[RMDB]
Source: RMDB library M2PK50, as collected in RNAgym. This 177-nucleotide RNA was probed chemically with DMS and 2A3. 2A3 adducts were read by reverse transcription with SuperScript II with manganese. High DMS reactivity at an A or C suggests that its Watson-Crick edge is free. For 2A3, 1,561 sequencing reads were counted. Conditions: 150 mM KOAc, 10 mM MgCl2 and 150 mM bicine (pH 8.5), 24 C. The DMS profile rests on 1,870 reads.

RNA sequence: GGGAACGACUCGAGUAGAGUCGAAAACGGCCUGGCUUCGGCCAGGCCGAAAGAUGCAUUUUACGCCAAGAAAUCCCGGAACAUUGGCCCGGAAGCCUGAGAAAAGAGUACUGUUCGCAGUACUCAAGAUAAGCAAGAUGUUCGCAUCUUGCUUAUCAAAAGAAACAACAACAACAAC
Reactivity to DMS in 0.01 (KOAc 150mM, MgCl2 10mM, bicine 150mM(pH8.5), 24C), signal-to-noise 2, nucleotides 027 to 126: c010g000g020c010c000u010g000g000c010u010u000c230g010g000c020c000a010g000g050c000c000g000a000a000a050g000a110u000g010c070a070u010u000u000u020a110c130g030c000c050a050a110g010a070a090a130u010c000c000c000g000g000a060a030c110a100u010u000g010g020c030c060c070g000g010a060a140g020c040c040u010g000a140g000a090a130a050a120g000a010g000u000a000c000u000g000u000u000c220g010c000a020g020u000a000c000u000c000a030a050
Reactivity to 2A3 in 0.01 (KOAc 150mM, MgCl2 10mM, bicine 150mM(pH8.5), 24C), signal-to-noise 1, nucleotides 027 to 126: c010g000g030c000c000u000g010g000c040u030u080c160g080g000c010c000a010g010g000c030c000g000a010a000a000g030a010u070g000c010a000u000u030u040u130a060c040g000c000c010a070a020g060a080a110a030u000c020c010c010g030g030a070a000c040a090u070u080g040g040c000c000c030g100g030a100a030g020c000c080u100g050a060g090a110a160a020a030g000a000g020u000a010c010u000g050u040u060c270g000c040a010g010u000a000c010u020c010a000a000